[RMDB]
RNA sequence: GGGAACGACUCGAGUAGAGUCGAAAAGUCAUUUUUGCAUUAUUGCUCAAAAUUCAAUAUGUCAAAAAGAAGCUCCAUUUGCUUGAGCAUAAUUUACAUGCCCACAGCUGCACAUCUGUGAGGGGGACUAAGAGUCAUCCUUCGGGAUGACUCUUAGAAAAGAAACAACAACAACAAC
Reactivity to DMS in 0.01 (KOAc 150mM, MgCl2 10mM, bicine 150mM(pH8.5), 24C), signal-to-noise 1, nucleotides 027 to 126: g010u110c040a280u000u000u000u000u000g010c000a020u000u010a040u020u000g010c250u000c090a100a090a120a120u030u000c010a030a020u000a000u000g000u010c060a000a020a040a000a020g000a180a210g000c080u010c040c000a160u010u000u000g010c040u000u010g010a020g000c030a010u000a040a060u010u010u000a110c180a020u000g000c000c000c000a030c180a000g020c060u010g000c110a020c090a130u010c100u000g030u010g010a110g000g000g010g000g020a300
Reactivity to 2A3 in 0.01 (KOAc 150mM, MgCl2 10mM, bicine 150mM(pH8.5), 24C), signal-to-noise 1, nucleotides 027 to 126: g020u030c040a010u040u000u060u040u040g010c030a030u140u130a010u010u210g040c040u040c130a120a240a180a080u070u000c000a000a000u030a000u070g080u030c000a000a000a000a000a090g060a080a000g090c000u020c040c010a090u110u110u170g040c010u050u060g010a000g000c030a010u050a020a210u090u250u080a150c100a050u100g040c000c000c000a080c050a040g020c060u190g060c010a080c000a140u250c030u150g000u030g100a130g030g000g000g020g000a000

An RNA of 177 nucleotides, treated with DMS and 2A3 and read out base by base.
The RNA was probed in 150 mM KOAc, 10 mM MgCl2 and 150 mM bicine (pH 8.5) at 24 C.
DMS adducts were read by reverse transcription with MarathonRT.
The 2A3 profile rests on 561 reads.